RNA sequence: GGGAACGACUCGAGUAGAGUCGAAAAACUUGAUGGCCGCCGCAGCGGCAGCGGCGCAGCAACAGGCGGCGCAACAGCAGCAGCAGCAGCAGCAACAACAGCAGCAGCAGCAACAGCAGAAUGCGCACAAGAACACUGUAUUCGUACAGUGUUCUUGAAAAGAAACAACAACAACAAC
Reactivity to 2A3 in 0.01 (KOAc 150mM, MgCl2 10mM, bicine 150mM(pH8.5), 24C), signal-to-noise 2, nucleotides 027 to 126: a000c040u060u100g010a060u100g090g020c050c010g000c010c020g000c040a060g060c030g170g020c020a000g040c010g060g000c010g000c050a010g030c010a010a100c000a040g120g050c020g050g000c010g000c020a030a080c020a060g040c020a000g030c010a010g000c010a000g000c040a000g000c000a000g000c000a010a040c010a030a020c020a060g000c030a010g000c010a010g000c000a010g020c010a000a020c010a060g010c000a010g080a150a050u110g020c060g000c030a020
Reactivity to DMS in 0.01 (KOAc 150mM, MgCl2 10mM, bicine 150mM(pH8.5), 24C), signal-to-noise 4, nucleotides 027 to 126: a050c070u000u010g010a080u010g010g020c050c020g010c010c060g010c080a120g010c090g010g020c070a060g000c070g010g010c020g010c060a050g020c040a120a090c150a100g010g010c060g000g000c030g010c030a060a070c080a100g000c050a050g020c060a060g020c040a070g020c000a040g010c020a050g000c040a070a080c120a050a080c090a080g010c020a050g010c030a040g010c040a060g000c040a040a050c100a090g000c040a040g010a080a080u000g010c060g030c080a220
Chemical mapping of a 177-nucleotide RNA with 2A3 and DMS. Reactivities are rounded to 0.1 and cut off at 0 and 3. The data come from the RNA Mapping Database (RMDB), library OK2TST. Conditions: 150 mM KOAc, 10 mM MgCl2 and 150 mM bicine (pH 8.5), 24 C.